RNA sequence: GGGAACGACUCGAGUAGAGUCGAAAAUUCCUGAGGACUUGAGUGCUGUUUUACAUACGGGUCAGACACGGCUAGAGGCCAAGGUCAAGUUGAAAGCUGCAGUCUAGCCAGUGUGCGAACUGCAAGCAGACUGUGCUGUGUUCGCACAGCACAGUCUAAAAGAAACAACAACAACAAC
Reactivity to DMS in 0.01 (KOAc 150mM, MgCl2 10mM, bicine 150mM(pH8.5), 24C), signal-to-noise 2, nucleotides 027 to 126: u010u010c000c010u000g000a140g040g010a040c030u000u000g000a100g030u000g040c060u020g060u000u040u030u010a180c090a060u000a130c070g030g000g000u000c050a080g020a050c080a130c090g030g040c030u000a050g010a190g010g030c040c060a090a160g000g010u000c040a010a100g010u010u000g010a130a030a150g000c020u000g000c000a030g010u010c050u010a100g000c000c010a140g010u000g010u000g020c040g010a060a220c000u000g000c010a040a040g000c040
Reactivity to 2A3 in 0.01 (KOAc 150mM, MgCl2 10mM, bicine 150mM(pH8.5), 24C), signal-to-noise 1, nucleotides 027 to 126: u000u040c000c000u030g020a110g000g080a060c010u130u060g000a000g080u020g030c000u050g000u070u010u050u100a050c080a050u140a000c010g000g050g000u000c020a020g020a020c000a000c070g000g000c000u050a030g090a000g250g030c010c010a000a020g050g050u100c020a030a120g090u010u150g060a000a040a000g080c000u000g000c020a040g000u010c290u020a000g000c010c010a110g010u090g100u270g280c000g000a020a000c000u000g000c000a000a200g000c000

An RNA of 177 nucleotides, treated with DMS and 2A3 and read out base by base.
The RNA was probed in 150 mM KOAc, 10 mM MgCl2 and 150 mM bicine (pH 8.5) at 24 C.
It was measured as part of the RMDB libraries RFM100 and RFMREP.